An RNA of 207 nucleotides, treated with 2A3 and read out base by base. Reactivities are given for positions 27 through 156. For 2A3 the reverse transcriptase was SuperScript II with manganese.
RNA sequence: GGGAACGACUCGAGUAGAGUCGAAAAACUCCUAUUCCAACACGUCCUCGUCGUACAGAGUGGUAACAUGUGUCACCACAUAUCCAAGCUUGGGUACACGGGCUUGACCCAACCCCUUGGGCGAAUGAAAACCAGAUUACGUUCGCGUAAUCUGGAAGUCUUGCUUAGGCUUCGGCCUAAGCAAGACAAAAGAAACAACAACAACAAC
Reactivity to 2A3 in 0.01 (KOAc 150mM, MgCl2 10mM, bicine 150mM(pH8.5), 24C), signal-to-noise 2, nucleotides 027 to 156: a020c040u050c040c000u050a120u100u030c000c020a080a010c050a030c100g020u000c030c030u090c020g090u050c020g050u070a060c080a120g110a050g090u020g000g030u060a060a000c050a170u220g070u130g010u130c030a030c080c000a030c020a020u100a050u070c000c000a000a030g040c070u140u080g010g000g010u050a060c070a090c160g010g000g000c000u100u280g120a240c000c000c030a030a050c000c000c000c030u040u020g000g000g000c030g150a060a050u200g040a000a090a000a000c010c000a000g000a000u000u000a020c010g020u010u080c190g010c000g080u000a000a000u010c000u000g000g020a020a000
The reactions ran in a buffer of 150 mM KOAc, 10 mM MgCl2 and 150 mM bicine (pH 8.5), at 24 C.